[RMDB]
An RNA of 207 nucleotides, treated with DMS and 2A3 and read out base by base. For DMS, 3,425 sequencing reads were counted. Conditions: 150 mM KOAc, 10 mM MgCl2 and 150 mM bicine (pH 8.5), 24 C. Values cover nucleotides 27 to 156. DMS adducts were read by reverse transcription with MarathonRT. For 2A3 the reverse transcriptase was SuperScript II with manganese.

RNA sequence: GGGAACGACUCGAGUAGAGUCGAAAACUGGAGUAAAAGUAUUUAGUUGAUUAGCUACCCUGCACGGCGGCAAUAUUAAAUGAUCACCCGCAAUACUAUGAGCUCUGGGCUUCAUCUUCCUAUUCACCGUAGGAGGUCUAACGGGCAUUGUACUAGCCAUAGAUAUAAACUUCGGUUUAUAUCUAUGAAAAGAAACAACAACAACAAC
Reactivity to DMS in 0.01 (KOAc 150mM, MgCl2 10mM, bicine 150mM(pH8.5), 24C), signal-to-noise 2, nucleotides 027 to 156: c010u010g000g050a090g000u000a060a130a180a090g000u010a020u000u000u000a060g010u010u000g000a070u010u020a160g030c010u000a040c000c000c040u020g020c090a050c140g010g020c020g010g020c050a040a120u000a100u000u000a100a110a110u010g010a050u000c030a040c040c010c020g030c100a050a070u000a040c050u000a060u020g000a270g020c010u000c030u020g020g030g020c020u010u010c040a050u000c030u000u010c000c020u000a040u000u000c060a100c070c090g000u000a050g030g000a080g020g030u000c040u010a070a060c030g020g020g010c020a070u000u000g030u000a080c050u000a140g010c150
Reactivity to 2A3 in 0.01 (KOAc 150mM, MgCl2 10mM, bicine 150mM(pH8.5), 24C), signal-to-noise 4, nucleotides 027 to 156: c020u030g030g030a030g020u110a030a040a090a060g020u050a070u090u130u110a060g010u030u070g070a110u110u020a020g010c010u020a040c020c000c030u060g060c080a030c070g020g020c010g000g020c020a030a030u090a080u220u220a130a110a090u180g030a020u070c040a030c020c010c000g000c040a040a020u010a060c030u060a090u210g040a020g020c000u000c030u060g030g020g050c000u120u040c030a070u050c020u040u030c000c000u020a050u060u170c100a070c120c040g010u010a020g010g020a010g030g010u030c050u080a050a060c050g000g010g010c010a010u030u100g030u070a090c050u040a050g040c010